[RMDB]
Chemical mapping of a 177-nucleotide RNA with DMS and 2A3. Source: RMDB library OK2TRN, as collected in RNAgym.
RNA sequence: GGGAACGACUCGAGUAGAGUCGAAAAGACACGACGGAGACGUCGUGUCAAAGAGUGGGAAACCACUCAAAGAGCCACAGCUUCGGCUGUGGCUCAAGGCGAGGCACCGUCCACGGAGAAAACGGAACACGCAAAAUAUAUUCGUAUAUUUUGCGUGAAAAGAAACAACAACAACAAC
Reactivity to DMS in 0.01 (KOAc 150mM, MgCl2 10mM, bicine 150mM(pH8.5), 24C), signal-to-noise 6, nucleotides 027 to 126: g000a020c010a010c010g010a010c000g010g000a270g010a210c000g020u010c000g010u010g000u000c000a020a070a120g000a020g030u010g000g000g010a150a100a220c010c000a010c000u000c000a020a070a120g000a010g000c000c000a000c000a010g020c000u000u010c220g030g020c000u000g020u000g000g000c000u000c000a010a020g010g020c040g010a060g010g000c030a120c040c020g000u000c010c020a100c070g000g010a090g000a060a050a050a030c040g000g000a130a240
Reactivity to 2A3 in 0.01 (KOAc 150mM, MgCl2 10mM, bicine 150mM(pH8.5), 24C), signal-to-noise 3, nucleotides 027 to 126: g000a000c000a000c000g010a000c000g010g010a070g030a050c010g000u000c000g000u000g000u000c000a010a000a010g000a000g000u000g000g010g000a020a070a090c000c000a000c000u010c000a030a050a000g010a000g000c010c000a000c000a010g020c010u080u120c260g150g000c010u010g000u000g000g000c010u010c000a000a000g000g010c020g010a050g000g020c020a010c060c030g060u060c000c030a040c060g160g010a140g050a040a100a030a010c030g030g020a040a020